[RMDB]
RNA sequence: GGGAACGACUCGAGUAGAGUCGAAAAUUGACACAAUAAAUAACAAUAGUUAUGAAGCCUCACUUACAUGAAAGCUGAAGUGCUUUCUUUUGGGUGGGAUACACUUAAAUCUGACUUGUGUUGCAUUAACAUGUAUUGCCCCUUAGUUAGCCCUACACACUGAUAUCAUCUUCGGAUGAUAUCAGUGAAAAGAAACAACAACAACAAC
Reactivity to 2A3 in 0.01 (KOAc 150mM, MgCl2 10mM, bicine 150mM(pH8.5), 24C), signal-to-noise 4, nucleotides 027 to 156: u050u050g040a010c010a010c030a050a100u210a150a130a030u230a180a000c070a160a130u170a160g040u070u050a080u180g060a060a020g030c010c010u030c030a000c020u010u050a030c030a080u040g000a000a010a020g000c000u100g150a190a070g180u080g040c000u000u000u000c000u030u040u040u020g020g020g010u010g000g020g010a010u050a070c100a000c010u060u160a060a100a060u050c010u040g080a040c040u020u040g010u010g010u050u030g000c030a060u000u080a100a050c040a040u120g060u130a110u040u120g020c010c000c000c050u030u010a040g030u070u080a030g020c020c010c020u020a010c050a000
Reactivity to DMS in 0.01 (KOAc 150mM, MgCl2 10mM, bicine 150mM(pH8.5), 24C), signal-to-noise 2, nucleotides 027 to 156: u000u020g020a170c040a090c060a070a120u010a040a100a090u010a100a130c050a150a170u010a080g000u000u000a090u000g010a120a100g020c030c000u000c020a070c060u010u010a090c090a060u000g000a010a010a030g030c010u010g010a200a160g020u000g010c000u000u010u000c010u000u000u000u000g000g010g020u000g030g000g040a130u000a080c060a060c040u010u010a040a110a140u010c030u000g040a060c110u000u000g050u000g010u010u010g020c080a050u000u000a080a090c040a090u000g030u000a080u010u000g000c070c010c000c060u030u000a060g020u000u000a080g010c050c010c010u000a090c090a180

Structure probing data (2A3 and DMS) for a 207-nucleotide construct. Conditions: 150 mM KOAc, 10 mM MgCl2 and 150 mM bicine (pH 8.5), 24 C. For DMS the reverse transcriptase was MarathonRT. Values cover nucleotides 27 to 156.